An RNA of 177 nucleotides, treated with DMS and 2A3 and read out base by base. Reactivities are given for positions 27 through 126. For DMS the reverse transcriptase was MarathonRT. The 2A3 profile rests on 7,835 reads. 2A3 adducts were read by reverse transcription with SuperScript II with manganese. For DMS, 20,998 sequencing reads were counted.
[RMDB]
RNA sequence: GGGAACGACUCGAGUAGAGUCGAAAAGUGGGGUGUGUACAGUCUAGAACCAAAAAUAUGGAAGAGUUUAUGAGUCUGUGGUCACAAGCUUUCUAUGAUGGUGAGAAUGUCUCCAUUGAUGCCGAGACUAAUUUACUGAGUUCGCUCAGUAAAUUAGAAAAGAAACAACAACAACAAC
Reactivity to DMS in 0.01 (KOAc 150mM, MgCl2 10mM, bicine 150mM(pH8.5), 24C), signal-to-noise 9, nucleotides 027 to 126: g030u000g010g010g010g020u010g020u010g020u010a070c070a070g010u000c050u010a120g010a120a090c030c040a010a070a090a100a110u010a070u010g010g010a070a060g010a070g010u000u000u000a060u010g010a090g010u000c060u010g020u000g020g010u000c050a040c080a040a080g000c040u000u000u000c030u000a060u010g010a130u000g010g010u000g000a080g010a050a060u010g000u000c010u000c020c030a100u000u000g000a100u010g010c050c030g010a110g010a160
Reactivity to 2A3 in 0.01 (KOAc 150mM, MgCl2 10mM, bicine 150mM(pH8.5), 24C), signal-to-noise 6, nucleotides 027 to 126: g070u070g020g040g000g020u070g010u010g020u040a040c010a020g020u000c030u070a040g070a110a060c020c030a010a080a050a050a060u170a070u130g060g010a070a050g040a040g110u050u110u110a110u100g030a020g060u040c040u100g090u100g050g030u060c010a010c020a060a020g010c010u080u110u010c020u050a080u140g050a040u060g020g040u020g020a040g040a110a060u090g030u030c010u000c020c010a020u020u070g030a050u110g060c030c020g010a030g000a020